[RMDB]
RNA sequence: GGGAACGACUCGAGUAGAGUCGAAAACUCUAAAUAACGCUGCGUCGCGACGGAUGUGGCAACGCACACCGCAGCGCAGACGGUAAAGAAAGCGAACGAGAUCUCAAGCGUUACGUACGAGUUGAGAAAAUAUUUAAAAUUUCGAUUUUAAAUAUUUAAAAGAAACAACAACAACAAC
Reactivity to 2A3 in 0.01 (KOAc 150mM, MgCl2 10mM, bicine 150mM(pH8.5), 24C), signal-to-noise 5, nucleotides 027 to 126: c010u000c010u020a100a090a060u110a070a010c020g000c010u030g020c000g020u060c050g040c060g150a170c040g040g060a220u020g020u000g080g140c190a140a070c070g020c020a000c000a010c010c000g000c010a050g020c020g000c010a000g060a060c010g020g030u050a050a060a050g130a060a070a010g080c020g010a060a070c050g030a050g060a200u010c030u010c030a030a040g030c000g030u030u050a060c100g020u090a020c030g050a070g090u010u010g000a000g060a010
Reactivity to DMS in 0.01 (KOAc 150mM, MgCl2 10mM, bicine 150mM(pH8.5), 24C), signal-to-noise 5, nucleotides 027 to 126: c010u000c020u010a100a100a120u020a070a050c010g000c000u000g010c010g010u010c060g010c020g020a100c070g000g010a160u010g030u000g000g010c230a070a100c190g020c010a010c050a140c030c000g010c100a220g000c010g000c000a040g000a100c010g010g020u010a050a100a100g010a050a070a070g010c070g000a060a090c090g000a100g010a100u000c040u000c030a040a040g000c000g000u000u010a080c100g000u020a050c080g000a060g000u000u010g000a070g000a070